[RMDB]
RNA sequence: GGGAACGACUCGAGUAGAGUCGAAAACUGCCCGUUCGCGGGCAGAAAAAGAUAUGGAUCGAAGUCGAGCUUGGAUUUACGAAUAUGGUCGGAAACGACCAUAGGAGUUGUCAGCUCGUCUCGAUCCUAAGUCAAAAAAGCGAGAUUCGUCUCGCAAUCGAUAAAUUGGAUUCGUCCAAUUUAUCGAAAAAGAAACAACAACAACAAC
Reactivity to 2A3 in 0.01 (KOAc 150mM, MgCl2 10mM, bicine 150mM(pH8.5), 24C), signal-to-noise 5, nucleotides 027 to 156: c010u000g000c000c010c020g010u050u070c300g000c040g050g020g020c010a020g040a010a060a010a000a000g050a020u100a020u110g000g000a000u010c000g020a220a030g030u020c000g000a010g000c050u170u200g140g020a090u300u270u190a010c010g000a020a020u010a000u010g010g000u000c000g030g000a060a090a090c010g000a010c030c000a000u000a000g000g010a050g000u000u010g000u000c000a000g000c000u000c000g010u010c000u000c000g000a000u000c000c000u000a010a010g020u020c030a050a030a020a050a110a030g000c010g000a000g000a010u040u100c190g070u010c080u000c000g010c030a000a060
Reactivity to DMS in 0.01 (KOAc 150mM, MgCl2 10mM, bicine 150mM(pH8.5), 24C), signal-to-noise 2, nucleotides 027 to 156: c010u000g010c000c000c000g000u000u000c260g040c060g050g040g060c000a010g000a030a060a030a130a090g000a080u010a300u000g010g010a030u000c000g000a060a080g020u010c000g050a040g030c000u000u000g070g010a050u010u000u010a020c000g020a300a260u000a010u000g010g050u000c000g000g000a150a140a290c000g000a030c000c000a000u000a010g010g020a300g000u000u010g010u000c000a060g020c000u000c000g000u010c010u000c010g000a010u000c010c000u000a000a080g010u000c010a010a070a090a180a060a170g000c030g000a080g000a060u010u000c130g030u000c000u000c000g010c030a010a010